[RMDB]
This 177-nucleotide RNA was probed chemically with DMS and 2A3. For 2A3, 3,759 sequencing reads were counted. Conditions: 150 mM KOAc, 10 mM MgCl2 and 150 mM bicine (pH 8.5), 24 C.
RNA sequence: GGGAACGACUCGAGUAGAGUCGAAAACAAAACUGACCAGCUAUGAGGUCAUACAUCGUCAUAGGAAAACAAAACAAAACUGACCAGGUAUGAGGUCAUACAUCGUCAUAACAAACAAAACAACAAAAUGCCGUAAUAUAUUCGUAUAUUACGGCAUAAAAGAAACAACAACAACAAC
Reactivity to DMS in 0.01 (KOAc 150mM, MgCl2 10mM, bicine 150mM(pH8.5), 24C), signal-to-noise 4, nucleotides 027 to 126: c030a090a070a130a060c170u000g010a030c000c060a080g000c080u000a000u000g020a040g040g000u010c030a040u010a060c110a030u020c300g000u010c050a050u000a050g000g000a140a100a130a150c200a130a080a050a080c140a110a020a070a130c160u020g000a020c010c090a070g020g010u000a000u010g020a100g000g000u000c010a000u000a020c070a010u010c300g010u010c010a010u030a060a060c250a080a020a030c180a050a020a120a020c250a040a110c300a030a070a030
Reactivity to 2A3 in 0.01 (KOAc 150mM, MgCl2 10mM, bicine 150mM(pH8.5), 24C), signal-to-noise 4, nucleotides 027 to 126: c040a000a080a010a070c080u040g000a010c030c010a030g030c020u030a030u030g020a020g060g100u010c010a000u130a050c060a050u130c090g140u000c020a030u050a050g080g060a050a110a060a020c090a020a150a010a020c070a020a080a020a050c070u030g020a020c000c020a030g040g020u060a020u050g050a050g040g170u090c000a000u010a020c000a060u110c030g060u020c010a030u070a110a060c040a080a040a030c060a030a110a040a000c080a050a000c020a030a080a000